[RMDB]
RNA sequence: GGGAACGACUCGAGUAGAGUCGAAAAGAUAUGGAUUGUGUACCUGCAGCAACAGCUAGGAUCGGAAACGAUCCUAGACAUGCUGAAGUACCAAUCCUAAGUCAAAAGAACCACUUCGGUGGUUCAACAAAUCCACUCUGUUCGCAGAGUGGAUUUGAAAAGAAACAACAACAACAAC
Reactivity to 2A3 in 0.01 (KOAc 150mM, MgCl2 10mM, bicine 150mM(pH8.5), 24C), signal-to-noise 2, nucleotides 027 to 126: g060a020u050a030u170g010g000a010u030u090g050u050g000u280a040c030c050u250g290c030a030g020c010a010a190c030a170g070c000u000a000g020g010a010u000c020g020g060a040a050a060c020g000a010u030c000c010u010a010g020a020c010a000u100g000c000u000g030a030a040g000u020a010c000c010a000a010u010c000c000u000a130a020g050u010c040a060a020a070a190g000a000a010c000c000a010c020u040u060c210g220g010u000g000g000u000u030c000a000a000
Reactivity to DMS in 0.01 (KOAc 150mM, MgCl2 10mM, bicine 150mM(pH8.5), 24C), signal-to-noise 3, nucleotides 027 to 126: g010a040u010a300u000g000g000a000u010u010g000u010g020u000a000c060c070u020g030c000a000g010c000a040a110c300a200g040c010u000a000g010g020a010u000c010g010g000a190a140a300c020g000a000u000c000c000u000a010g000a030c110a110u000g010c010u010g020a160a080g000u010a010c000c000a030a000u010c000c010u000a030a110g010u000c050a110a020a190a210g000a000a020c000c010a000c010u000u010c260g050g030u000g000g000u010u000c020a140a190